[RMDB]
RNA sequence: GGGAACGACUCGAGUAGAGUCGAAAAAUUGUGAUAACACUGAUGAUCGGAUAAAUACACUUACUAUGAUAGUAUUGAUAAUCGGUGAAUACGCUUACUGUGAUAGUAAUGAUAAUCACUGUUAUAACGUAAUUUAGCUGUUCGCAGCUAAAUUACGAAAAGAAACAACAACAACAAC
Reactivity to DMS in 0.01 (KOAc 150mM, MgCl2 10mM, bicine 150mM(pH8.5), 24C), signal-to-noise 4, nucleotides 027 to 126: a110u000u000g010u000g010a040u010a030a050c010a010c080u010g010a020u000g000a040u000c030g000g040a160u010a070a090a090u010a080c140a150c220u000u000a040c050u020a010u000g000a040u000a030g010u000a010u000u000g000a120u010a060a080u010c030g020g010u000g000a120a130u010a070c140g010c040u000u000a000c000u010g020u000g000a030u000a000g020u000a010a010u000g010a060u000a060a020u000c010a010c060u000g000u010u000a030u010a090a170
Reactivity to 2A3 in 0.01 (KOAc 150mM, MgCl2 10mM, bicine 150mM(pH8.5), 24C), signal-to-noise 4, nucleotides 027 to 126: a000u110u170g050u060g020a030u010a070a010c010a000c030u020g010a040u010g010a010u070c070g070g100a090u160a160a150a020u160a090c060a010c070u040u050a040c030u050a020u050g100a040u060a040g010u020a030u070u090g040a040u100a160a060u090c040g050g040u100g080a050a040u190a070c060g000c040u020u000a010c000u010g020u020g110a020u020a010g040u020a060a090u140g040a030u050a060a010u010c000a000c020u020g010u050u040a090u020a100a040